Structure probing data (2A3) for a 177-nucleotide construct. For 2A3 the reverse transcriptase was SuperScript II with manganese. Values cover nucleotides 27 to 126. Conditions: 150 mM KOAc, 10 mM MgCl2 and 150 mM bicine (pH 8.5), 24 C.
[RMDB]
RNA sequence: GGGAACGACUCGAGUAGAGUCGAAAAGUGGAUUCACAGCGUGCUCCUGGGACAAGCGCUGAGAACAGCGCUCAUCUCAGAAGGGGGAGCUCGUCCACAAUGACCGACCGAGACACGUAGUGGGCUCGCGCGAAACAACCUUCGGGUUGUUUCGCGCAAAAGAAACAACAACAACAAC
Reactivity to 2A3 in 0.01 (KOAc 150mM, MgCl2 10mM, bicine 150mM(pH8.5), 24C), signal-to-noise 1, nucleotides 027 to 126: g010u000g000g050a070u150u180c120a000c010a110g010c020g120u120g120c010u000c010c000u000g020g000g020a010c010a020a020g010c000g020c000u000g030a060g100a300a030c010a000g010c000g000c000u000c010a000u000c010u010c000a060g040a160a070g000g000g010g010g000a010g000c000u000c060g030u020c000c000a000c020a000a030u100g040a050c040c010g010a020c000c040g030a030g010a060c010a000c140g110u100a070g100u090g010g140g000c000u020c110